Chemical mapping of a 207-nucleotide RNA with DMS and 2A3. For DMS the reverse transcriptase was MarathonRT.
[RMDB]
RNA sequence: GGGAACGACUCGAGUAGAGUCGAAAAGGGGUCAAAGUUGUCAGGUUGAUGUAUUCCGAAGAACACUUGCAACAAGUAUGACUGAAGCCUCCACGGUCAUACUUGUUGCAAGUGGGAGGAAUACUCAACCUUGGAUUUACUUUGACGGAGGCACCCACUAAAAGAGGAUCUUCGGAUCCUCUUUUAGAAAAGAAACAACAACAACAAC
Reactivity to DMS in 0.01 (KOAc 150mM, MgCl2 10mM, bicine 150mM(pH8.5), 24C), signal-to-noise 2, nucleotides 027 to 156: g000g020g020g020u010c000a020a020a030g030u000u000g030u010c010a050g030g050u000u000g010a040u000g040u000a000u000u010c000c000g020a100a210g020a180a290c000a010c010u000u010g010c000a020a010c000a020a030g000u000a000u000g000a060c000u000g010a090a120g010c000c000u000c000c010a300c050g030g010u000c000a010u000a000c000u000u000g010u000u000g010c000a000a000g000u000g000g000g000a040g020g010a010a020u000a000c010u000c000a010a020c000c020u000u000g010g000a030u000u010u000a030c000u000u000u000g000a040c010g020g020a020g030g060c000a130c010c000c000a300
Reactivity to 2A3 in 0.01 (KOAc 150mM, MgCl2 10mM, bicine 150mM(pH8.5), 24C), signal-to-noise 1, nucleotides 027 to 156: g090g010g050g020u020c010a020a000a000g030u050u050g060u080c080a050g010g050u000u000g040a070u230g000u020a010u000u000c010c010g090a220a010g000a000a000c010a010c020u000u000g030c000a000a000c000a000a000g010u000a000u010g000a000c000u010g040a050a040g010c010c000u020c000c000a030c020g020g000u020c010a000u010a000c000u000u000g000u000u000g010c000a000a000g000u000g000g000g000a000g000g000a010a000u010a000c000u000c000a000a000c000c000u000u050g010g000a010u170u070u200a010c000u020u000u000g000a000c000g010g000a000g010g010c010a000c020c000c010a030